[RMDB]
Structure probing data (DMS and 2A3) for a 207-nucleotide construct. For DMS the reverse transcriptase was MarathonRT. It was measured as part of the RMDB library OK3TST.
RNA sequence: GGGAACGACUCGAGUAGAGUCGAAAAGAGUGGAUAUGCUUAGACACCACUGCAGAACAAUAAAAGCUAUUAAAUUUUUCCAGUUUAUUACAGCAGAGCCAUGCAGCUGUUGCCAUGGCUAGCUGUGGGGUACCGGUGGUUGACAGCCUGGAGUCUAGUACCGUCAUUUAUUCGUAAAUGACGGUACAAAAGAAACAACAACAACAAC
Reactivity to DMS in 0.01 (KOAc 150mM, MgCl2 10mM, bicine 150mM(pH8.5), 24C), signal-to-noise 2, nucleotides 027 to 156: g000a090g060u010g040g020a130u020a100u000g020c010u000u000a100g010a110c020a070c000c040a060c000u010g030c060a140g000a080a130c070a060a130u010a040a060a090a160g010c030u000a050u000u010a030a040a150u000u000u000u000u000c000c040a210g040u000u000u010a060u020u000a080c010a040g020c020a090g010a120g010c020c000a030u000g020c040a070g040c040u010g000u000u000g020c080c040a020u010g000g000c030u000a030g020c000u000g020u000g000g000g000g030u000a030c070c020g000g020u000g020g040u010u030g010a120c050a070g000c020c000u030g010g000a130g000u010c020u010a200
Reactivity to 2A3 in 0.01 (KOAc 150mM, MgCl2 10mM, bicine 150mM(pH8.5), 24C), signal-to-noise 4, nucleotides 027 to 156: g040a010g010u050g050g010a080u090a050u260g040c050u130u100a070g030a060c010a010c040c010a020c010u050g020c060a070g040a170a070c060a090a050u200a150a090a030a010g020c040u070a060u190u170a160a170a220u130u120u030u080u050c010c010a010g000u120u080u050a100u090u080a060c010a000g030c010a030g030a010g160c000c010a000u000g000c020a060g010c120u170g080u300u110g050c050c020a010u010g020g000c000u010a000g000c000u010g010u030g020g010g010g010u030a040c020c040g000g070u030g010g000u010u070g010a020c010a020g080c010c020u050g010g020a030g040u030c010u080a020